[RMDB]
RNA sequence: GGGAACGACUCGAGUAGAGUCGAAAAAGGUAAGUACUGCCUGGUUUCCUUCACCUUGGAAUUUACUUGCUCAUCUUAAGAAAACACCCAGGUGGCCGGGUGCAGUGGUUCACGCCUGUAAUCCCAGCAGUUUGGGAGGCUGAGGCGGGUGGAUCAAACUAUGAUCCAGUUUCGACUGGAUCAUAGUAAAAGAAACAACAACAACAAC
Reactivity to DMS in 0.01 (KOAc 150mM, MgCl2 10mM, bicine 150mM(pH8.5), 24C), signal-to-noise 1, nucleotides 027 to 156: a030g010g040u000a060a080g030u000a030c070u000g030c010c020u000g010g000u000u000u000c030c030u000u020c060a080c040c010u010u000g010g020a170a090u000u000u000a080c060u000u000g030c000u000c090a100u020c080u020u010a050a130g020a130a080a120a160c020a000c040c020c020a110g010g040u000g030g000c040c040g000g050g060u000g040c060a100g040u020g000g020u000u000c030a060c030g000c020c000u020g020u010a130a190u010c020c000c000a080g030c090a240g000u000u000u000g050g010g010a060g030g030c120u000g020a030g010g040c050g000g030g050u000g000g000a070u000c020a040a100
Reactivity to 2A3 in 0.01 (KOAc 150mM, MgCl2 10mM, bicine 150mM(pH8.5), 24C), signal-to-noise 2, nucleotides 027 to 156: a000g080g030u110a080a070g010u040a080c020u030g020c000c000u010g030g000u010u040u050c000c000u010u040c010a010c000c010u060u020g040g010a090a080u120u060u120a110c030u040u050g070c030u050c090a250u110c050u170u180a090a020g020a050a100a020a000c060a050c000c000c000a040g030g000u000g020g010c050c000g040g000g050u080g040c040a040g030u010g020g000u040u070c010a010c050g000c000c030u170g180u030a040a000u020c010c000c000a010g030c040a050g030u180u240u050g020g000g020a020g010g000c190u050g050a010g000g020c010g020g030g030u070g020g020a000u050c010a090a040